RNA sequence: GGGAACGACUCGAGUAGAGUCGAAAACUGCAGUGGGGUGAUGAUGCCUGUGACUAGCCUGUGUCCAGUGGCAAGGCCAUUCUGUCUUCUACUGGGGUGUUUAGUGCCUCUCGCAUGGUGACACUUCCCAUCGUACGCUGUUCGCAGCGUACGAUGGAAAAGAAACAACAACAACAAC
Reactivity to 2A3 in 0.01 (KOAc 150mM, MgCl2 10mM, bicine 150mM(pH8.5), 24C), signal-to-noise 1, nucleotides 027 to 126: c020u070g000c000a020g050u040g020g060g040g000u040g020a080u000g000a000u140g030c020c030u000g030u080g040a020c020u050a040g040c020c020u060g060u040g080u000c030c020a030g010u030g020g000c090a040a020g030g040c010c010a130u160u070c080u080g010u010c000u030u010c010u050a020c060u030g000g000g000g040u070g050u030u140u110a110g020u120g030c020c020u000c000u020c000g010c060a030u140g000g000u030g010a000c000a000c000u040u070c030
Reactivity to DMS in 0.01 (KOAc 150mM, MgCl2 10mM, bicine 150mM(pH8.5), 24C), signal-to-noise 1, nucleotides 027 to 126: c060u010g000c030a040g030u000g020g010g000g010u030g000a070u000g010a130u000g010c070c000u010g030u020g010a040c090u010a100g000c040c040u000g020u010g000u000c010c050a040g000u010g000g000c230a030a040g010g020c050c130a140u000u010c130u020g000u000c020u020u000c020u010a020c030u000g000g000g000g010u000g030u010u000u000a080g030u010g020c010c070u000c060u000c060g000c060a030u000g010g020u010g010a090c120a040c090u010u020c100
This 177-nucleotide RNA was probed chemically with 2A3 and DMS. For 2A3 the reverse transcriptase was SuperScript II with manganese. It was measured as part of the RMDB library OK2TRN. The reactions ran in a buffer of 150 mM KOAc, 10 mM MgCl2 and 150 mM bicine (pH 8.5), at 24 C.